Structure probing data (2A3 and DMS) for a 177-nucleotide construct.
Reactivities are given for positions 27 through 126.
For 2A3, 713 sequencing reads were counted.
Values are in units of 0.01, from 0 to 300, in steps of 10.
For DMS the reverse transcriptase was MarathonRT.
The RNA was probed in 150 mM KOAc, 10 mM MgCl2 and 150 mM bicine (pH 8.5) at 24 C.
RNA sequence: GGGAACGACUCGAGUAGAGUCGAAAAGUGUGUACGAUUUUAGGCCUUACCAUUUUAAAAUGAGAAAAAAACGCUAUCUUACUUGGGACCCAUAGGUAUCAAUGGGCUGGUCUAUCAGUGCCAAGUAUGGUAAUUUGGUUUUCGAACCAAAUUACCAAAAAGAAACAACAACAACAAC
Reactivity to 2A3 in 0.01 (KOAc 150mM, MgCl2 10mM, bicine 150mM(pH8.5), 24C), signal-to-noise 1, nucleotides 027 to 126: g050u030g010u020g010u010a030c010g030a130u030u030u000u100a020g000g040c000c000u030u040a060c040c010a070u070u080u160u280a110a190a090a120u130g020a020g050a000a070a000a050a070a020a020c030g000c060u030a060u070c020u030u000a060c000u010u020g000g020g030a000c000c030c030a010u020a070g160g000u120a030u240c070a030a030u090g000g000g000c040u000g060g010u000c010u030a040u120c040a020g050u030g060c040c000a020a000g140u020a090
Reactivity to DMS in 0.01 (KOAc 150mM, MgCl2 10mM, bicine 150mM(pH8.5), 24C), signal-to-noise 2, nucleotides 027 to 126: g000u010g010u010g040u000a020c080g000a090u010u010u000u010a090g020g020c020c000u000u000a180c040c010a060u010u010u020u010a040a050a080a050u010g000a160g020a000a000a020a120a090a060a070c110g000c090u000a050u010c030u000u000a050c020u000u000g000g010g010a120c020c010c070a020u000a040g000g010u020a050u000c110a050a060u000g000g000g020c070u000g000g000u010c030u000a030u010c130a070g020u000g000c040c030a060a110g000u010a060